[RMDB]
RNA sequence: GGGAACGACUCGAGUAGAGUCGAAAAGACCGCUGCUAGUCCGUAAGGAUGUGUAUAGCGGCCGAAACCUGCCCAGUGUUGGUACCUGAAAGCUCUUUUCAAGGAGAAGAAGGGCCAAUAAACGGCGGAGUGGUAAGGAUUUCGAUCCUUACCACUCAAAAGAAACAACAACAACAAC
Reactivity to DMS in 0.01 (KOAc 150mM, MgCl2 10mM, bicine 150mM(pH8.5), 24C), signal-to-noise 2, nucleotides 027 to 126: g010a000c000c000g040c020u000g000c000u000a200g020u000c000c010g010u080a050a100g000g000a060u000g000u000g000u020a190u020a090g000c000g000g060c000c000g030a060a150a120c000c000u020g010c010c020c070a260g000u040g000u030u000g020g020u010a020c000c000u020g000a270a060a040g010c000u000c000u020u000u050u050c230a070a160g010g000a010g010a020a010g000a300a010g000g020g000c000c000a030a000u000a010a120a090c130g000g050c030g040
Reactivity to 2A3 in 0.01 (KOAc 150mM, MgCl2 10mM, bicine 150mM(pH8.5), 24C), signal-to-noise 8, nucleotides 027 to 126: g020a010c000c000g000c010u000g010c010u020a010g020u010c010c000g110u130a120a110g000g000a040u040g030u000g000u050a040u050a300g000c000g000g010c000c020g040a070a030a030c010c010u010g000c000c030c060a160g000u000g010u000u010g080g010u220a300c000c000u020g040a060a080a050g020c000u000c020u020u110u180u110c160a160a120g020g000a000g000a020a000g040a010a010g000g000g000c000c010a000a000u010a000a050a000c010g000g000c020g010